[RMDB]
RNA sequence: GGGAACGACUCGAGUAGAGUCGAAAAGAUAUGGACGUUUCCCGAGCGAAGAACUCGGAAACGAGGGAGCUCAGGGACUGACGUCCUAAGUCAAACGUGCUGAUACGGUUCGCCGUAUCAGCACGAAGGUUGGGAUAAUCUUCGGAUUAUCCCAACCAAAAGAAACAACAACAACAAC
Reactivity to DMS in 0.01 (KOAc 150mM, MgCl2 10mM, bicine 150mM(pH8.5), 24C), signal-to-noise 1, nucleotides 027 to 126: g010a040u000a300u010g000g000a060c000g000u000u000u000c000c000c000g060a010g000c000g010a110a180g030a160a090c000u000c000g000g010a080a080a140c000g060a000g050g000g000a090g000c000u000c010a170g020g000g000a000c300u000g020a000c000g020u010c000c000u000a070a070g000u000c040a150a050a300c010g030u000g020c000u000g030a040u000a000c000g000g000u000u010c190g000c000c000g030u000a000u000c000a000g000c000a000c000g000a000a010
Reactivity to 2A3 in 0.01 (KOAc 150mM, MgCl2 10mM, bicine 150mM(pH8.5), 24C), signal-to-noise 2, nucleotides 027 to 126: g020a030u040a070u140g000g000a000c000g020u020u030u000c040c020c000g040a000g000c040g200a300a050g000a090a040c000u000c000g000g050a060a060a010c000g010a000g020g000g020a070g000c040u060c300a300g050g040g020a010c240u170g030a000c010g000u040c010c000u020a140a020g120u030c060a090a020a090c020g000u000g030c000u000g030a010u040a020c020g050g070u050u120c300g000c020c020g000u010a000u000c000a020g090c020a000c000g010a000a010
Structure probing data (DMS and 2A3) for a 177-nucleotide construct. For 2A3 the reverse transcriptase was SuperScript II with manganese. The DMS profile rests on 656 reads. Conditions: 150 mM KOAc, 10 mM MgCl2 and 150 mM bicine (pH 8.5), 24 C. The 2A3 profile rests on 1,843 reads. Reactivities are given for positions 27 through 126.